Source: RMDB library OK3TST, as collected in RNAgym. The record gives the reactivity of an RNA of 207 nucleotides to 2A3 and DMS. 2A3 adducts were read by reverse transcription with SuperScript II with manganese. The reactions ran in a buffer of 150 mM KOAc, 10 mM MgCl2 and 150 mM bicine (pH 8.5), at 24 C.
RNA sequence: GGGAACGACUCGAGUAGAGUCGAAAAAUCGCGUAAGGUCACAAAAUGCAGAUCGCGAAGAUGACAACGGUCGCCUCCGGUACGCUGGUGGUAAAGAACGGCCAAAUCAAAAUGAAUUCUGUUCUCCAGGUGAUCUACUACCGCUUCCAACAGCGCCGACUACUUGAUCUUUCGAGAUCAAGUAGUCAAAAGAAACAACAACAACAAC
Reactivity to 2A3 in 0.01 (KOAc 150mM, MgCl2 10mM, bicine 150mM(pH8.5), 24C), signal-to-noise 5, nucleotides 027 to 156: a000u040c020g010c010g050u050a100a060g020g020u040c020a020c030a080a160a050a010u170g000c030a020g020a060u060c030g030c070g080a050a060g060a080u110g030a040c040a100a030c110g000g020u020c010g010c010c010u000c010c010g020g020u030a030c170g020c060u010g000g030u030g010g030u110a120a110a060g040a090a030c040g030g000c020c000a070a070a030u090c050a040a060a020a100u120g050a020a100u140u010c010u030g010u060u040c090u010c100c030a040g030g050u020g010a030u000c010u060a060c030u040a040c020c060g010c020u050u020c040c040a070a060c030a120g090c040g040c130c070
Reactivity to DMS in 0.01 (KOAc 150mM, MgCl2 10mM, bicine 150mM(pH8.5), 24C), signal-to-noise 1, nucleotides 027 to 156: a070u000c050g030c020g030u000a090a080g020g030u040c020a060c020a060a100a080a200u000g050c000a110g000a050u010c010g000c010g000a130a130g050a020u000g020a090c040a050a080c030g000g000u000c010g020c020c020u030c010c000g030g040u010a080c070g000c010u000g010g030u000g010g000u010a020a020a080g000a100a040c000g020g020c050c060a020a060a080u000c060a040a050a170a090u010g010a080a140u000u000c040u050g020u000u010c050u010c040c020a210g000g020u000g000a080u010c030u010a030c030u010a040c030c020g000c030u000u020c030c030a070a040c000a030g000c000g030c030c090